This 177-nucleotide RNA was probed chemically with DMS and 2A3. Reactivities are given for positions 27 through 126. 2A3 adducts were read by reverse transcription with SuperScript II with manganese. High 2A3 reactivity points to a flexible backbone, as in loops and unpaired stretches. It was measured as part of the RMDB library OK2TRN. The reactions ran in a buffer of 150 mM KOAc, 10 mM MgCl2 and 150 mM bicine (pH 8.5), at 24 C.
RNA sequence: GGGAACGACUCGAGUAGAGUCGAAAAAACCAUCGAUGCAGUGGUGAUUGGAACCUGGCCCUAUCUGCACAGGACCCUAGUGCUGGAGGCCCUGAGGGCAGGCAAGCAUGUCUUGACUGAAGCUCGCCAACUUAUACCCGUUCGCGGGUAUAAGUUGAAAAGAAACAACAACAACAAC
Reactivity to DMS in 0.01 (KOAc 150mM, MgCl2 10mM, bicine 150mM(pH8.5), 24C), signal-to-noise 4, nucleotides 027 to 126: a070a060c030c010a070u010c090g010a110u000g010c040a050g010u010g010g010u000g000a110u000u000g000g000a100a090c050c040u010g000g000c040c020c040u000a110u010c060u000g010c040a100c050a060g010g000a110c080c050c030u010a070g000u010g000c050u000g000g010a100g000g000c030c010c070u000g000a050g010g010g030c030a050g000g000c050a030a030g010c030a110u000g000u000c020u000u000g000a070c060u000g000a100a070g010c020u000c040g000c180
Reactivity to 2A3 in 0.01 (KOAc 150mM, MgCl2 10mM, bicine 150mM(pH8.5), 24C), signal-to-noise 3, nucleotides 027 to 126: a010a010c060c000a040u080c050g100a100u110g010c030a010g030u010g020g020u030g060a110u080u120g050g030a060a040c020c020u030g120g020c010c000c000u120a160u080c050u080g000c060a020c000a070g060g050a090c030c020c000u050a050g050u030g120c070u060g010g080a060g040g030c000c020c010u030g080a070g000g000g000c000a010g000g030c030a020a000g000c080a140u160g050u060c020u030u080g040a150c030u060g050a060a040g020c010u020c040g010c010